[RMDB]
RNA sequence: GGGAACGACUCGAGUAGAGUCGAAAAGGCCUGAGUCAGACCAUAAAUACCAAUGGCAAUACCGAUUAAUGCUUCGCUGGCACCUUGCAGAGCCAUGCCGUACGUGGUCAGAACCGGCAGAACCAUAACUGAGUGAAGGAUUCGUCCUUCACUCAGUAAAAGAAACAACAACAACAAC
Reactivity to DMS in 0.01 (KOAc 150mM, MgCl2 10mM, bicine 150mM(pH8.5), 24C), signal-to-noise 3, nucleotides 027 to 126: g030g010c020c000u000g020a090g020u000c030a100g000a100c030c000a020u010a040a090a120u010a100c030c060a110a060u010g010g010c010a090a130u000a170c160c050g000a080u010u010a110a110u010g010c050u000u000c160g030c130u010g030g020c020a070c040c050u000u000g000c080a100g000a170g020c010c040a040u000g000c110c140g010u010a040c140g010u000g020g000u000c050a090g020a050a050c050c160g020g000c000a080g010a090a120c010c030a080u000a090
Reactivity to 2A3 in 0.01 (KOAc 150mM, MgCl2 10mM, bicine 150mM(pH8.5), 24C), signal-to-noise 2, nucleotides 027 to 126: g080g010c010c050u070g010a040g040u000c030a030g000a040c010c010a010u060a030a150a020u150a060c020c010a050a050u040g010g000c000a000a030u050a120c050c010g030a010u050u150a140a080u150g030c060u110u090c060g040c120u100g000g010c010a020c040c000u040u140g000c040a010g040a010g060c020c000a030u050g060c010c020g010u030a050c050g010u020g000g000u000c010a010g020a060a010c010c000g020g000c000a020g050a020a020c020c010a050u120a150